[RMDB]
RNA sequence: GGGAACGACUCGAGUAGAGUCGAAAAGAACGUUCUCACGAACGAGAGUGAUCGAGUUCUCACGAGAGUACGUGAUCUCACACACACUCGAACGUUCACACUCGUACGAGUGAGAGUUCGAGAACGUGUACACUCACACACGAGUACACUCACGAGAUGGCAUAAUAAUAUUCGUAUUAUUAUGCCAAAAAGAAACAACAACAACAAC
Reactivity to 2A3 in 0.01 (KOAc 150mM, MgCl2 10mM, bicine 150mM(pH8.5), 24C), signal-to-noise 9, nucleotides 027 to 156: g030a040a010c030g020u030u010c030u010c020a050c070g080a110a010c040g010a020g000a010g080u050g020a130u100c080g000a020g040u110u030c030u020c040a020c030g090a080g000a020g100u120a060c020g010u010g060a090u040c010u020c010a040c000a000c000a000c000a020c030u000c000g010a020a010c010g040u070u030c030a010c000a000c020u020c010g160u300a100c270g010a000g000u000g010a010g000a000g010u010u010c010g000a000g010a040a030c060g000u010g000u030a020c040a000c020u030c010a050c010a010c000a010c130g040a020g020u110a020c010a010c070u170c120a010c070g130a040g020a080
Reactivity to DMS in 0.01 (KOAc 150mM, MgCl2 10mM, bicine 150mM(pH8.5), 24C), signal-to-noise 6, nucleotides 027 to 156: g000a100a080c020g020u000u000c000u000c050a210c120g020a070a110c080g000a080g000a080g020u010g010a190u000c070g010a140g010u000u000c020u000c020a100c060g010a150g000a090g030u000a050c030g020u000g010a080u000c020u000c040a120c220a120c020a040c050a100c010u000c000g000a020a060c010g000u000u000c040a180c030a060c030u000c030g020u000a110c140g020a080g020u000g000a090g000a070g000u000u000c020g000a040g000a020a070c060g020u000g000u010a090c090a090c050u000c010a120c060a100c070a110c060g000a110g010u010a060c020a090c030u000c020a120c060g000a120g010a230